The record gives the reactivity of an RNA of 177 nucleotides to 2A3 and DMS. The 2A3 profile rests on 1,269 reads. Reactivities are rounded to 0.1 and cut off at 0 and 3.

RNA sequence: GGGAACGACUCGAGUAGAGUCGAAAAUCAUUGGCUUCGCUGCGCGCUGCGUUGCCUAGGCUUCAGAUGCUUCGUACUGUUGCCAACGUAGCAAUUUCCAAACGCUAAUGCGAAAGUGUGCAAACAAUACGGAGUGAGGUUUCGACCUCACUCCGUAAAAAGAAACAACAACAACAAC
Reactivity to 2A3 in 0.01 (KOAc 150mM, MgCl2 10mM, bicine 150mM(pH8.5), 24C), signal-to-noise 1, nucleotides 027 to 126: u080c030a080u020u100g060g040c000u020u020c000g030c000u090g000c030g000c010g000c020u010g010c010g020u000u010g020c000c000u000a020g000g050c000u020u010c040a030g030a250u100g070c050u080u140c100g030u090a090c030u030g030u040u000g000c000c000a040a060c030g000u010a040g020c000a040a090u010u020u050c020c000a010a080a030c040g000c040u110a210a020u120g030c050g080a010a000a040g050u030g000u010g000c000a110a010a030c090a090a070
Reactivity to DMS in 0.01 (KOAc 150mM, MgCl2 10mM, bicine 150mM(pH8.5), 24C), signal-to-noise 1, nucleotides 027 to 126: u000c100a070u010u000g060g010c020u010u000c040g020c000u000g020c050g010c020g000c050u000g000c070g000u000u000g000c140c000u000a220g000g000c070u000u000c050a040g000a120u000g000c070u040u000c090g000u000a180c070u000g000u000u000g000c000c000a070a070c120g000u000a050g000c030a020a130u000u000u000c000c040a110a130a140c040g000c000u000a040a080u000g000c000g000a010a080a020g000u000g010u020g020c070a170a020a170c150a070a020